[RMDB]
RNA sequence: GGGAACGACUCGAGUAGAGUCGAAAAGAUCCUAAGGGACGGGGUAACCCCGGCAGACAGCGCGAUCUCGCGUGUUGCCCGAAAGGGAAUCGGGUUAAGAUUUCCCGAGCCGGGACGUGGCGGUUGACCUAACGCACAUUUUCGAAUGUGCGUUAGGAAAAGAAACAACAACAACAAC
Reactivity to DMS in 0.01 (KOAc 150mM, MgCl2 10mM, bicine 150mM(pH8.5), 24C), signal-to-noise 2, nucleotides 027 to 126: g020a130u000c000c000u020a150a150g010g000g010a060c060g010g010g010g030u000a110a120c160c000c000c000g020g010c050a120g020a030c040a090g010c010g020c020g000a190u050c270u050c020g010c000g020u000g010u000u010g000c010c000c020g000a120a090a100g000g010g000a040a080u010c000g000g010g030u000u040a070a160g000a160u010u010u020c000c000c000g000a100g000c050c000g000g000g000a130c090g010u000g000g000c100g030g010u000u020g020a260
Reactivity to 2A3 in 0.01 (KOAc 150mM, MgCl2 10mM, bicine 150mM(pH8.5), 24C), signal-to-noise 2, nucleotides 027 to 126: g070a080u090c000c000u020a080a060g020g000g030a040c080g000g060g000g000u090a060a100c020c000c000c000g020g000c000a000g030a150c000a030g080c090g000c000g050a150u140c090u100c110g010c000g000u050g070u080u100g060c000c000c010g000a100a060a020g000g020g010a010a040u020c000g010g000g000u030u080a160a090g060a230u030u010u080c000c000c000g040a000g000c000c000g000g000g010a000c030g000u040g000g040c010g020g000u000u060g050a030